[RMDB]
Conditions: 150 mM KOAc, 10 mM MgCl2 and 150 mM bicine (pH 8.5), 24 C.
The record gives the reactivity of an RNA of 177 nucleotides to DMS and 2A3.
For DMS, 1,393 sequencing reads were counted.
DMS (dimethyl sulfate) methylates the pairing face of unpaired adenines and cytosines.

RNA sequence: GGGAACGACUCGAGUAGAGUCGAAAAUCAUAUGAAAAAUGAAUGCUUAUACUGAAGACCGCGCUUCGGUAAAAAGAUAAUUCUGAAUAAUUGUAACCUUUAGGUAAAAAAAGUUAUACGCGGUGGACGGUGAUAUAUACUUCGGUAUAUAUCACCGAAAAGAAACAACAACAACAAC
Reactivity to DMS in 0.01 (KOAc 150mM, MgCl2 10mM, bicine 150mM(pH8.5), 24C), signal-to-noise 2, nucleotides 027 to 126: u000c060a040u010a090u020g010a020a060a120a170a030u000g000a020a040u010g000c000u010u000a200u000a020c020u020g000a020a030g000a140c010c000g010c000g000c010u000u000c000g010g020u000a000a060a090a060a030g010a080u000a080a130u000u000c020u000g010a110a060u000a120a110u000u000g010u010a030a040c040c040u000u020u020a080g010g030u010a010a010a050a020a060a070a090g000u010u000a020u000a060c010g000c010g010g020u000g010g020a190
Reactivity to 2A3 in 0.01 (KOAc 150mM, MgCl2 10mM, bicine 150mM(pH8.5), 24C), signal-to-noise 1, nucleotides 027 to 126: u020c000a000u130a110u260g140a060a000a000a030a000u070g050a070a040u170g020c000u030u010a000u000a050c000u000g050a020a000g050a000c030c010g000c020g000c030u050u010c020g010g000u010a130a200a000a000a000g050a050u140a040a040u170u170c030u060g130a150a080u170a150a120u140u120g040u090a000a140c000c000u000u080u120a200g030g000u170a210a050a040a010a000a000a000g010u080u090a140u030a160c020g000c030g000g000u010g030g090a030